RNA sequence: GGGAACGACUCGAGUAGAGUCGAAAAGAUAUGGAUAAAGACCAGCCUUGUAAGCGAUGCAAACCUGGUGUCGGAAACGACACUCAGGGACGUAUAUCGCUACAAGGCUGGUCUUUAUCCUAAGUCACUUCAUUAAUUCCUUCGGGAAUUAAUGAAGAAAAGAAACAACAACAACAAC
Reactivity to DMS in 0.01 (KOAc 150mM, MgCl2 10mM, bicine 150mM(pH8.5), 24C), signal-to-noise 2, nucleotides 027 to 126: g000a060u010a300u000g010g010a000u000a000a010a020g030a030c000c020a020g000c000c010u000u000g000u000a100a150g040c000g020a020u000g020c070a030a300a300c000c010u000g000g010u000g000u000c000g030g010a100a070a300c000g000a000c000a000c000u020c020a000g010g030g000a040c300g000u000a160u010a030u000c010g050c000u020a000c010a020a040g000g000c010u000g000g010u000c000u000u000u000a000u000c000c000u000a010a040g020u000c040a230

Structure probing data (DMS) for a 177-nucleotide construct. The reactions ran in a buffer of 150 mM KOAc, 10 mM MgCl2 and 150 mM bicine (pH 8.5), at 24 C. For DMS the reverse transcriptase was MarathonRT.